[RMDB]
RNA sequence: GGGAACGACUCGAGUAGAGUCGAAAAGAAGUGGCAGGGACAUGCCCCAAAAGCUCGUUCUAGCAACAUAUGUUUGGCUAGUUCGAGCGAUUAGUCUCGAGGAGCGUCCUCUCGCCUUUUAACGAGACGAGGCUAUAGGUUUCGACCUAUAGCCUCGAAAAGAAACAACAACAACAAC
Reactivity to 2A3 in 0.01 (KOAc 150mM, MgCl2 10mM, bicine 150mM(pH8.5), 24C), signal-to-noise 2, nucleotides 027 to 126: g170a020a020g020u030g020g010c060a040g060g030g060a040c030a050u140g000c010c010c000c000a050a130a000a000g000c000u000c000g000u010u000c000u010a000g000c010a030a070c020a120u300a090u300g050u070u100u080g140g000c000u000a000g010u010u000c000g000a000g000c000g000a000u010u020a030g060u000c020u040c090g020a120g000g010a090g010c010g030u000c030c000u070c040u020c050g040c000c000u000u180u020u050a090a000c000g000a000g010a000
Reactivity to DMS in 0.01 (KOAc 150mM, MgCl2 10mM, bicine 150mM(pH8.5), 24C), signal-to-noise 2, nucleotides 027 to 126: g030a090a130g000u000g000g000c030a140g000g040g030a020c130a100u030g000c000c000c000c040a060a000a190a190g040c000u000c000g000u000u000c040u000a000g050c000a040a000c070a230u050a210u100g000u000u000u020g010g010c010u000a000g010u000u000c000g000a000g000c000g000a000u010u040a080g010u010c050u000c030g000a110g070g000a170g000c040g000u000c030c000u020c010u020c030g000c090c000u000u030u040u070a010a250c090g000a030g000a140